[RMDB]
RNA sequence: GGGAACGACUCGAGUAGAGUCGAAAAGCCAGUGCUACAAGGGUUAUCUCACAACCUCAGAUGCUGGAUAAGUCCAAGGAGGCAGAAUCGCUUUUGGAUGACAUUCAGAAAGGCCGGAGUGAUUAUUAUACGUAUAGAUGUUCGCAUCUAUACGUAUAAAAGAAACAACAACAACAAC
Reactivity to DMS in 0.01 (KOAc 150mM, MgCl2 10mM, bicine 150mM(pH8.5), 24C), signal-to-noise 6, nucleotides 027 to 126: g010c020c010a080g030u000g030c080u000a110c110a130a150g000g000g010u010u000a090u010c090u000c110a110c140a070a070c030c020u010c080a100g010a130u010g010c010u000g000g000a030u000a050a300g010u000c010c020a020a050g010g010a060g010g010c040a100g000a080a100u010c130g010c010u000u000u000u000g010g000a030u000g010a150c190a070u000u010c040a020g000a100a070a110g000g020c020c060g010g010a070g010u000g010a090u010u000a080u000u000
Reactivity to 2A3 in 0.01 (KOAc 150mM, MgCl2 10mM, bicine 150mM(pH8.5), 24C), signal-to-noise 4, nucleotides 027 to 126: g040c010c030a030g040u070g060c010u030a060c050a080a070g030g000g020u060u040a090u050c090u030c020a040c040a050a070c010c000u050c020a010g040a070u120g050c020u020g020g010a020u020a050a020g010u000c010c010a010a000g180g130a080g030g180c040a040g210a180a140u150c080g020c010u020u050u010u090g000g000a010u030g010a030c050a080u030u050c000a030g080a100a060a010g090g000c040c030g030g020a070g030u050g030a050u030u160a030u100u020